This 177-nucleotide RNA was probed chemically with DMS and 2A3. For 2A3 the reverse transcriptase was SuperScript II with manganese. Conditions: 150 mM KOAc, 10 mM MgCl2 and 150 mM bicine (pH 8.5), 24 C. The DMS profile rests on 1,726 reads. 2A3 is a SHAPE reagent: it acylates the 2'-hydroxyl of flexible nucleotides of all four kinds. Values cover nucleotides 27 to 126.
[RMDB]
RNA sequence: GGGAACGACUCGAGUAGAGUCGAAAAUCACACAACCACCCGUCCUACGUCGAGCCCUACCAGGGCGCGGCCACCGGGGUGGGCGGCAUCGUCCGCGACAUCAUGGCCAUGGGCGCCCGACCGGUCGCCAUGCAAUCUGCUUCGGCAGAUUGCAUGGAAAAGAAACAACAACAACAAC
Reactivity to DMS in 0.01 (KOAc 150mM, MgCl2 10mM, bicine 150mM(pH8.5), 24C), signal-to-noise 3, nucleotides 027 to 126: u000c100a100c150a110c090a090a240c010c010a060c020c000c010g040u000c050c030u010a190c230g010u010c030g000a080g010c000c000c010u000a090c280c220a130g010g030g000c010g020c020g000g030c020c040a040c170c100g000g010g000g020u010g000g010g030c020g020g000c050a120u000c170g030u000c010c000g020c040g010a070c090a050u010c030a100u010g030g000c040c030a120u010g050g010g010c020g020c050c010c040g020a060c050c060g000g000u000c100g030
Reactivity to 2A3 in 0.01 (KOAc 150mM, MgCl2 10mM, bicine 150mM(pH8.5), 24C), signal-to-noise 2, nucleotides 027 to 126: u040c010a020c010a000c020a100a120c010c010a020c010c010c010g090u130c020c020u070a090c030g050u000c000g010a020g010c020c010c000u040a150c010c110a080g000g010g000c020g000c010g020g000c030c000a030c010c050g060g010g000g000u020g020g020g010c000g000g000c030a120u170c140g140u050c010c030g030c050g070a070c040a070u110c020a080u120g010g000c000c040a030u060g060g070g020c010g000c060c020c000g060a060c030c000g020g070u010c030g000